RNA sequence: GGGAACGACUCGAGUAGAGUCGAAAACGGGAAUGUGGGACUGGCAGCAGGCUGGAGGACACCCGCAUCCGCCGCACCCAACGGCGCAUCCGCACCAUCCGCACGCUCAUCCCGGUGGACCAGCAGGCAUAUGUCGGUAGUUCGCUACCGACAUAUGAAAAGAAACAACAACAACAAC
Reactivity to DMS in 0.01 (KOAc 150mM, MgCl2 10mM, bicine 150mM(pH8.5), 24C), signal-to-noise 5, nucleotides 027 to 126: c090g010g010g010a080a050u000g020u000g000g000g000a140c060u000g010g020c070a140g000c110a080g010g020c030u000g020g010a100g000g000a120c220a080c030c020c010g020c030a060u000c070c020g010c000c020g000c050a130c010c010c010a110a170c070g000g010c030g010c100a060u000c030c040g000c060a090c070c030a060u000c030c040g010c060a070c100g000c040u000c050a120u000c030c010c030g000g020u000g000g010a090c050c040a060g020c070a080g010g000
Reactivity to 2A3 in 0.01 (KOAc 150mM, MgCl2 10mM, bicine 150mM(pH8.5), 24C), signal-to-noise 3, nucleotides 027 to 126: c040g000g010g020a090a120u080g020u050g040g000g040a040c040u050g030g020c040a080g040c020a040g250g000c050u020g020g050a020g030g060a020c020a050c030c010c010g010c010a020u030c010c030g070c000c000g000c000a060c000c000c000a020a020c030g030g000c020g000c030a040u040c020c040g020c020a020c020c010a050u050c020c030g000c020a040c050g020c010u040c030a080u060c020c000c010g030g010u040g010g030a050c030c020a010g070c030a010g070g000